RNA sequence: GGGAACGACUCGAGUAGAGUCGAAAAACUUGUUUUAGAAUGCACUAGGGCAUCCACUUCUGCCGUUAAGUUGCAAAAUAAUGAGAUCAAACCUUCAGGUCUAAAAACCAUGGUUGUGUCUGCGGGUCAAUCCAACUCUUCGGAGUUGGAAAAAGAAACAACAACAACAAC
Reactivity to 2A3 in 0.01 (KOAc 150mM, MgCl2 10mM, bicine 150mM(pH8.5), 24C), signal-to-noise 3, nucleotides 027 to 129: a000c030u040u010g040u060u100u040u010a070g110a220a090u080g000c020a000c000u020a000g000g000g070c000a060u020c050c000a180c000u190u050c020u030g030c000c010g180u050u000a090a030g070u110u070g000c000a010a000a170a000u220a000a050u110g050a000g030a060u070c130a070a020a000c010c000u120u090c110a020g020g020u020c090u200a030a130a010a000a000c060c010a070u100g060g000u040u060g030u000g020u030c000u000g050c060g060g040g000u040c000a000a000
Reactivity to DMS in 0.01 (KOAc 150mM, MgCl2 10mM, bicine 150mM(pH8.5), 24C), signal-to-noise 5, nucleotides 027 to 129: a050c080u060u000g000u050u010u090u000a070g040a150a160u030g020c000a000c000u000a030g040g020g000c000a010u010c010c010a000c080u030u010c080u020g020c040c030g010u000u000a030a000g020u050u020g030c030a010a040a060a100u050a020a040u030g010a050g010a050u080c090a080a130a060c020c010u000u000c060a080g040g000u030c020u050a020a050a040a050a020c050c000a100u070g010g030u050u010g040u010g020u010c020u020g060c230g030g000g030u020c100a050a100

This 170-nucleotide RNA was probed chemically with 2A3 and DMS. It was measured as part of the RMDB library 15KLIB. For 2A3, 2,783 sequencing reads were counted. For 2A3 the reverse transcriptase was SuperScript II with manganese. DMS adducts were read by reverse transcription with MarathonRT.